[RMDB]
Chemical mapping of a 177-nucleotide RNA with DMS and 2A3. For 2A3 the reverse transcriptase was SuperScript II with manganese. For DMS, 73,611 sequencing reads were counted. The reactions ran in a buffer of 150 mM KOAc, 10 mM MgCl2 and 150 mM bicine (pH 8.5), at 24 C.
RNA sequence: GGGAACGACUCGAGUAGAGUCGAAAACAGGAUGGGCCCGCGGCUUAUCAGCUUGUUGGUGGGGUAAUGGCCUACCAAGGCGACGACGGGUAGCCGACCAGAGAGCGUGACCGGCCACACUGGCCGGAAUAAAUAUGAUAUUCGUAUCAUAUUUAUUAAAAGAAACAACAACAACAAC
Reactivity to DMS in 0.01 (KOAc 150mM, MgCl2 10mM, bicine 150mM(pH8.5), 24C), signal-to-noise 9, nucleotides 027 to 126: c120a120g010g000a070u010g010g000g000c010c000c020g010c030g000g010c090u020u040a060u020c110a140g010c010u000u020g010u010u000g000g000u000g000g000g000g010u000a120a090u020g000g000c000c000u000a010c010c010a010a110g000g000c000g000a080c060g000a140c040g000g000g010u000a100g010c010c010g000a120c030c020a130g000a110g000a090g010c050g000u010g000a150c000c010g000g000c000c000a160c160a110c210u020g010g020c000c000g000g000
Reactivity to 2A3 in 0.01 (KOAc 150mM, MgCl2 10mM, bicine 150mM(pH8.5), 24C), signal-to-noise 9, nucleotides 027 to 126: c040a020g070g010a070u090g020g040g010c010c010c010g010c010g020g000c040u100u100a050u190c050a050g020c010u090u300g040u030u020g030g000u000g000g000g000g000u010a020a010u020g020g020c000c000u000a000c010c000a120a250g010g000c010g010a030c020g030a050c000g020g000g000u020a020g100c000c010g010a020c000c010a020g040a010g000a010g090c050g010u040g020a040c000c000g000g000c000c000a080c010a050c140u110g000g000c000c000g000g000